[RMDB]
RNA sequence: GGGAACGACUCGAGUAGAGUCGAAAAGAGCGGAUCCGACUUGCGGGUUGAGGGUCGACGCGAUCCCCAACAGUCCCGAUGUCAGCGGAUCAGCGUUGGCGGCCAAUGCGGACAGAAUGUCGCUCAGCAGAUGUCAUGUUUUCGAACAUGACAUCUGAAAAGAAACAACAACAACAAC
Reactivity to 2A3 in 0.01 (KOAc 150mM, MgCl2 10mM, bicine 150mM(pH8.5), 24C), signal-to-noise 4, nucleotides 027 to 126: g040a000g000c020g020g010a030u020c030c000g080a140c120u060u120g020c040g040g040g000u030u040g020a060g040g020g000u050c030g030a090c040g040c070g080a060u070c040c000c000c010a020a020c010a040g160u130c000c030c020g040a060u110g070u070c050a020g010c030g020g040a080u050c030a020g000c010g030u010u040g010g000c000g020g020c010c020a040a020u130g000c050g040g010a010c020a050g150a100a050u150g030u070c010g020c040u000c020a030g020
Reactivity to DMS in 0.01 (KOAc 150mM, MgCl2 10mM, bicine 150mM(pH8.5), 24C), signal-to-noise 6, nucleotides 027 to 126: g000a060g020c030g020g000a040u000c010c010g010a130c040u000u010g020c090g010g000g020u000u010g020a080g010g020g010u000c010g010a160c200g030c090g020a040u000c010c000c010c020a070a080c060a120g000u000c070c010c020g000a130u000g000u000c090a040g010c090g000g010a050u000c070a080g010c020g010u000u000g000g020c070g000g000c060c040a050a070u000g010c020g010g010a060c090a090g010a080a060u010g020u000c020g010c030u000c040a130g010